[RMDB]
RNA sequence: GGGAACGACUCGAGUAGAGUCGAAAAAUGCGAAAGCUGGGUCUCACGGUCCAUAAUGUGGCAGGCACAGCGUGAGGCUGGCUUCACAGAGCAGCGACAACUGCCCGCUUCCAACGGUGGAAGGAUAUAAUGAUGCCUCUUUCGAGAGGCAUCAUUAAAAAGAAACAACAACAACAAC
Reactivity to 2A3 in 0.01 (KOAc 150mM, MgCl2 10mM, bicine 150mM(pH8.5), 24C), signal-to-noise 3, nucleotides 027 to 126: a000u080g010c000g110a150a070a030g010c000u150g110g020g000u000c010u000c020a010c000g000g080u070c020c030a160u180a200a060u240g020u060g040g050c070a090g240g000c060a000c030a060g100c000g000u010g000a000g000g000c000u000g020g000c010u000u000c020a030c020a010g070a010g000c000a000g010c000g130a050c050a070a020c040u050g050c000c000c000g000c000u010u000c030c000a090a060c100g110g100u120g020g050a060a000g040g040a000u040a010
Reactivity to DMS in 0.01 (KOAc 150mM, MgCl2 10mM, bicine 150mM(pH8.5), 24C), signal-to-noise 3, nucleotides 027 to 126: a110u010g010c040g000a090a040a070g010c000u010g000g000g000u000c000u010c000a000c000g020g000u060c030c060a100u040a100a110u070g030u030g020g000c080a090g010g000c090a060c100a110g000c030g000u010g010a040g010g010c000u010g010g000c020u000u000c100a060c100a020g000a100g000c060a030g020c020g020a110c230a090a250c050u020g000c010c010c000g030c030u000u000c010c020a080a130c290g000g000u000g000g000a060a000g000g010a060u050a050